RNA sequence: GGGAACGACUCGAGUAGAGUCGAAAAAGCGAGUACGUACUCGUCGAAAAGACGAGUACUCCGCGCGCAAAGUACUCGCAGCUCAGAAAUCAAACUAUCCGAUAAGGAUACGCGCGCGGACUGAGCAAUAUCCCACGGGAUUCGUCCCGUGGGAUAUAAAAGAAACAACAACAACAAC
Reactivity to DMS in 0.01 (KOAc 150mM, MgCl2 10mM, bicine 150mM(pH8.5), 24C), signal-to-noise 1, nucleotides 027 to 126: a130g020c000g000a030g000u010a000c030g000u000a000c000u000c000g000u000c000g000a200a010a180a170g000a000c010g000a040g000u000a000c030u040c000c040g000c000g020c000g090c020a170a080a160g020u000a000c000u020c070g000c040a080g040c000u000c000a000g000a200a150a040u020c200a150a130a020c290u000a000u000c000c000g000a040u100a170a190g020g000a000u040a080c300g000c010g000c030g000c000g000g000a040c180u000g010a000g000c000a170
Reactivity to 2A3 in 0.01 (KOAc 150mM, MgCl2 10mM, bicine 150mM(pH8.5), 24C), signal-to-noise 3, nucleotides 027 to 126: a000g010c000g000a010g000u000a010c030g000u000a000c000u010c000g000u000c000g030a090a000a000a260g000a000c010g010a000g000u010a000c000u000c000c000g000c000g010c010g000c050a240a010a040g000u000a000c000u000c000g000c000a030g000c000u010c040a010g060a060a100a100u150c090a070a080a120c080u040a020u000c000c000g100a230u090a300a180g020g000a010u010a080c070g010c010g000c000g000c020g000g000a010c010u060g030a010g020c020a040